[RMDB]
RNA sequence: GGGAACGACUCGAGUAGAGUCGAAAACCGCACUUCUUCGGAAGUGCGGAAAUACCGAGAUUGUACCUCGGUAGAAGUACAUUACCCUUGGAAACAAGGGAAAAAGCGUGAGCUUCGGCUCACGCAAGAUGAUGCAUAGGUUCGCCUAUGCAUCAUCAAAAGAAACAACAACAACAAC
Reactivity to 2A3 in 0.01 (KOAc 150mM, MgCl2 10mM, bicine 150mM(pH8.5), 24C), signal-to-noise 3, nucleotides 027 to 126: c000c000g010c000a000c000u020u010c010u030u040c110g140g010a000a010g010u010g000c000g010g000a020a020a000u030a000c010c010g010a010g000a030u140u220g070u200a090c020c000u000c000g000g010u010a020g030a080a010g090u060a050c010a120u070u200a140c010c010c000u010u010g010g000a050a050a030c010a000a010g000g000g000a010a060a000a020a010g010c010g000u000g000a000g000c030u030u070c230g100g000c000u000c010a000c000g000c000a000a000
Reactivity to DMS in 0.01 (KOAc 150mM, MgCl2 10mM, bicine 150mM(pH8.5), 24C), signal-to-noise 3, nucleotides 027 to 126: c010c000g010c000a000c000u000u000c000u000u010c180g030g010a020a000g020u000g010c000g020g000a000a020a080u000a050c010c010g000a010g010a070u000u010g000u020a270c070c000u000c000g010g000u000a010g000a060a120g000u000a060c160a070u000u010a110c000c000c000u000u000g000g000a140a080a200c000a020a000g000g000g020a010a020a040a100a060g010c000g020u010g000a010g010c000u000u030c250g030g000c000u000c000a000c000g000c000a010a010
The data come from the RNA Mapping Database (RMDB), library M2PK50. An RNA of 177 nucleotides, treated with 2A3 and DMS and read out base by base. Values cover nucleotides 27 to 126.